[RMDB]
RNA sequence: GGGAACGACUCGAGUAGAGUCGAAAAAUUCAGAGGGCGCUACCAUGCAAACUAGGGCUGGCUACUCUUGCACAGAAUCACAUCUCGAUAAUUGUCAGUGCAAGAAGGACAAUUAUACCAUUUAAUGAAAACGUUUACCUGUUCGCAGGUAAACGAACCACUGUAUAAGCUUCGGCUUAUACAGUGGAAAAGAAACAACAACAACAAC
Reactivity to DMS in 0.01 (KOAc 150mM, MgCl2 10mM, bicine 150mM(pH8.5), 24C), signal-to-noise 2, nucleotides 027 to 156: a100u000u020c050a170g020a130g000g020g010c000g000c050u000a080c020c040a080u010g000c020a110a060a130c060u000a060g010g000g020c130u010g000g000c030u000a190c040u000c000u000u000g040c020a120c020a060g000a120a070u000c060a090c120a070u000c080u000c030g070a070u000a010a040u000u000g020u010c010a300g000u000g040c050a060a040g000a020a190g010g000a010c020a000a040u000u000a080u000a170c040c050a110u000u010u000a050a180u010g010a060a090a090a120c030g060u010u000u010a000c000c000u000g060u000u000c300g040c020a000g030g020u000a000a010a010c000g020a020a090
Reactivity to 2A3 in 0.01 (KOAc 150mM, MgCl2 10mM, bicine 150mM(pH8.5), 24C), signal-to-noise 5, nucleotides 027 to 156: a010u060u040c050a030g010a050g050g020g000c020g000c020u020a070c030c010a030u070g020c040a040a090a100c060u080a050g010g010g010c020u020g030g010c030u060a060c010u030c000u010u010g020c010a000c000a010g130a110a060u160c020a060c030a250u070c080u080c150g070a010u020a050a020u040u000g000u010c020a010g010u000g030c010a010a010g010a000a010g010g000a000c000a010a000u030u010a030u030a080c020c050a100u130u160u210a120a140u170g080a050a060a010a010c010g000u000u010u000a000c010c000u000g010u020u050c210g020c070a000g000g000u000a000a000a000c000g000a000a000